[RMDB]
RNA sequence: GGGAACGACUCGAGUAGAGUCGAAAACGAGUGCAAUAAAGACGCGGUUUCCGAUCGGUAUGGAUGCCACCGUGACGGCUCAAUCACACAAGUGCCAACGAUAACGAGGCGCUCGCUAUUGCUGCGUAAAAGCGACGAUCGUUCGCGAUCGUCGCAAGACAACACAUAGCUUCGGCUAUGUGUUGUCAAAAGAAACAACAACAACAAC
Reactivity to 2A3 in 0.01 (KOAc 150mM, MgCl2 10mM, bicine 150mM(pH8.5), 24C), signal-to-noise 1, nucleotides 027 to 156: c060g020a020g000u060g000c020a110a110u120a170a120a010g080a040c060g000c020g020g000u040u050u000c020c050g020a060u030c010g060g040u100a040u120g090g020a010u130g060c050c010a020c030c080g050u030g070a030c020g000g060c000u030c090a080a140u180c000a050c000a020c000a170a000g030u030g030c010c020a000a050c100g080a180u100a230a010c020g000a040g030g020c020g000c000u010c020g020c000u000a070u130u080g030c100u060g020c010g000u080a090a090a110a040g000c030g000a000c000g010a020u000c010g090u160u150c190g020c090g130a020u000c000g000u000c000g000c000a020a010
An RNA of 207 nucleotides, treated with 2A3 and read out base by base. The 2A3 profile rests on 676 reads. The RNA was probed in 150 mM KOAc, 10 mM MgCl2 and 150 mM bicine (pH 8.5) at 24 C. Values cover nucleotides 27 to 156.